[RMDB]
RNA sequence: GGGAACGACUCGAGUAGAGUCGAAAACAUAGCGAUAGGAAGAGAUGCUAGGAGUUGGUGGCGACCGGAGCGAGGAGAAAAGCAAAGAAAGCAACGGGGCUAGCCGACGGGUGUUCCGCCUCCCGAGGAACCCAGCCGUUCGCGGCUGGGAAAAGAAACAACAACAACAAC
Reactivity to 2A3 in 0.01 (KOAc 150mM, MgCl2 10mM, bicine 150mM(pH8.5), 24C), signal-to-noise 2, nucleotides 027 to 129: c040a020u090a040g040c000g060a030u110a030g020g000a010a060g010a030g020a040u040g040c040u050a020g000g000a030g070u050u060g060g010u040g040g000c040g010a020c030c020g000g000a010g000c030g040a040g030g000a020g050a010a110a010a010g060c060a040a060a060g040a050a080a000g030c030a040a040c030g100g000g060g000c000u040a040g000c000c020g000a030c000g000g000g000u020g070u000u000c000c010g000c000c000u010c030c000c040g020a030g030g020a000a050
Reactivity to DMS in 0.01 (KOAc 150mM, MgCl2 10mM, bicine 150mM(pH8.5), 24C), signal-to-noise 2, nucleotides 027 to 129: c030a080u070a030g060c040g000a050u130a070g000g060a040a010g020a020g000a070u060g030c120u050a010g030g070a040g030u040u020g030g030u000g000g080c070g050a040c100c020g000g040a070g030c280g010a030g010g000a060g010a000a000a000a000g010c120a060a060a090g020a050a100a070g010c050a120a120c140g040g050g010g020c100u010a120g030c000c030g000a110c090g000g000g020u030g020u040u000c050c030g050c080c030u020c030c010c060g030a130g010g050a080a000
Conditions: 150 mM KOAc, 10 mM MgCl2 and 150 mM bicine (pH 8.5), 24 C. This 170-nucleotide RNA was probed chemically with 2A3 and DMS. It was measured as part of the RMDB library 15KLIB. Values cover nucleotides 27 to 129.